[RMDB]
RNA sequence: GGGAACGACUCGAGUAGAGUCGAAAAAUUUGACUCAACACGGGGAACUUUACCAGAUCCGGACAGGGUGAGGAUUGACAGAUGGAGUGUUCUUUCUCGAUCCCCUGAAUGGUGGUGCAUGGCCGCUUUUGGUCGGUGGAGUGAUUUGUUUGGUUGACAUAGACAUGUAGUUCGCUACAUGUCUAUGAAAAGAAACAACAACAACAAC
Reactivity to DMS in 0.01 (KOAc 150mM, MgCl2 10mM, bicine 150mM(pH8.5), 24C), signal-to-noise 3, nucleotides 027 to 156: a180u000u010u010g020a040c030u000c010a040a080c040a140c040g020g010g000g030a070a080c060u000u000u000a050c030c020a190g020a100u010c010c000g030g010a300c030a060g030g020g000u010g000a070g020g010a040u000u000g000a080c060a110g020a170u000g000g000a120g010u010g020u000u000c030u000u000u000c010u000c010g020a240u010c000c000c010c010u000g010a050a200u010g040g010u000g000g020u000g000c060a120u010g010g000c020c010g010c130u000u000u000u000g030g020u000c020g020g010u000g010g000a110g020u010g000a070u000u000u000g010u010u000u000g010g000u000u000g000a270
Reactivity to 2A3 in 0.01 (KOAc 150mM, MgCl2 10mM, bicine 150mM(pH8.5), 24C), signal-to-noise 7, nucleotides 027 to 156: a010u110u100u120g020a010c010u000c030a030a010c020a020c040g020g000g010g020a050a030c020u090u060u080a190c060c010a040g040a110u060c030c020g020g020a020c010a010g000g030g010u070g020a030g000g010a010u010u050g020a020c030a030g110a100u180g110g060a100g120u070g050u110u040c000u010u030u000c080u020c030g080a110u060c010c000c000c010u010g020a030a010u040g020g000u010g020g030u030g040c080a100u080g050g000c000c020g060c090u130u180u090u180g030g000u020c030g020g030u050g010g030a080g020u060g050a080u030u070u060g070u040u050u090g080g020u020u010g000a010